The record gives the reactivity of an RNA of 177 nucleotides to DMS and 2A3. Source: RMDB library OK2TRN, as collected in RNAgym. DMS adducts were read by reverse transcription with MarathonRT. 2A3 adducts were read by reverse transcription with SuperScript II with manganese. The RNA was probed in 150 mM KOAc, 10 mM MgCl2 and 150 mM bicine (pH 8.5) at 24 C.
RNA sequence: GGGAACGACUCGAGUAGAGUCGAAAAAUAAGAUGAUAUUUCGGAAAUUUUCUUUAUGUGGAUCAUCUUGGCUGCAUAAUGUAGAUCUCGGUAAUUCUGAGGAUAACUUUGAAGACAACAGAGACAAGUAUUAGUAGUGCUUCGGCACUACUAAUACAAAAGAAACAACAACAACAAC
Reactivity to DMS in 0.01 (KOAc 150mM, MgCl2 10mM, bicine 150mM(pH8.5), 24C), signal-to-noise 2, nucleotides 027 to 126: a130u000a050a040g020a060u000g000a090u010a110u010u010u010c060g020g000a070a120a100u000u020u000u000c050u000u010u000a020u010g010u000g020g000a040u010c010a020u010c100u000u000g020g020c040u000g040c020a040u000a040a040u000g010u010a080g000a120u000c010u000c010g010g010u010a080a090u000u000c020u010g010a030g010g010a120u020a060a080c030u020u000u000g000a010a030g010a070c220a070a070c060a040g000a020g020a040c140a090a130
Reactivity to 2A3 in 0.01 (KOAc 150mM, MgCl2 10mM, bicine 150mM(pH8.5), 24C), signal-to-noise 1, nucleotides 027 to 126: a000u100a000a070g000a000u040g020a010u000a150u190u180u110c040g010g150a070a160a160u050u150u110u080c010u020u190u020a100u090g030u020g090g020a080u040c000a030u060c000u090u080g060g030c020u060g080c030a050u010a210a000u180g070u110a050g060a300u000c020u000c000g060g000u020a030a080u050u020c010u010g020a030g010g000a050u050a250a090c020u010u030u130g000a020a010g140a030c060a010a000c020a130g000a010g030a030c040a010a140